The record gives the reactivity of an RNA of 177 nucleotides to DMS and 2A3. As a SHAPE reagent, 2A3 marks flexible, mostly unpaired nucleotides at the ribose 2'-OH. It was measured as part of the RMDB library TTRINS. For 2A3, 6,239 sequencing reads were counted. The reactions ran in a buffer of 150 mM KOAc, 10 mM MgCl2 and 150 mM bicine (pH 8.5), at 24 C.
RNA sequence: GGGAACGACUCGAGUAGAGUCGAAAAGAUAUGGAUUUGAACUACUGCUCUGCGUAGGAUAGAUGCGAAGAACGAUUAGGUCGGAAACGACCUAAUCGGGAGCAUCCUGAGCAGCAAAUCCUAAGUCCGAAUUAUUAUCCUUCGGGAUAAUAAUUCGAAAAGAAACAACAACAACAAC
Reactivity to DMS in 0.01 (KOAc 150mM, MgCl2 10mM, bicine 150mM(pH8.5), 24C), signal-to-noise 3, nucleotides 027 to 126: g010a110u000a290u010g000g010a020u000u000u000g010a070a050c090u010a300c010u000g000c000u000c000u000g030c200g020u000a130g020g010a170u010a120g010a040u000g000c030g020a110a120g000a160a240c010g000a030u000u010a000g000g000u010c000g020g010a080a100a220c020g020a010c000c000u000a000a000u000c000g000g000g010a050g020c000a000u000c000c020u010g000a010g030c020a000g000c010a000a010a030u010c010c000u000a050a160g010u000c040
Reactivity to 2A3 in 0.01 (KOAc 150mM, MgCl2 10mM, bicine 150mM(pH8.5), 24C), signal-to-noise 4, nucleotides 027 to 126: g080a030u130a080u240g000g010a020u040u020u000g050a170a070c080u270a060c000u300g020c000u010c020u080g230c220g270u300a140g080g260a130u250a220g090a030u050g020c000g260a300a020g000a110a030c000g010a000u010u020a000g000g000u010c000g010g030a030a070a060c010g000a010c000c000u000a000a010u000c000g010g000g010a010g010c010a000u000c010c020u020g000a000g000c000a010g000c000a010a010a010u000c000c000u020a140a020g070u010c050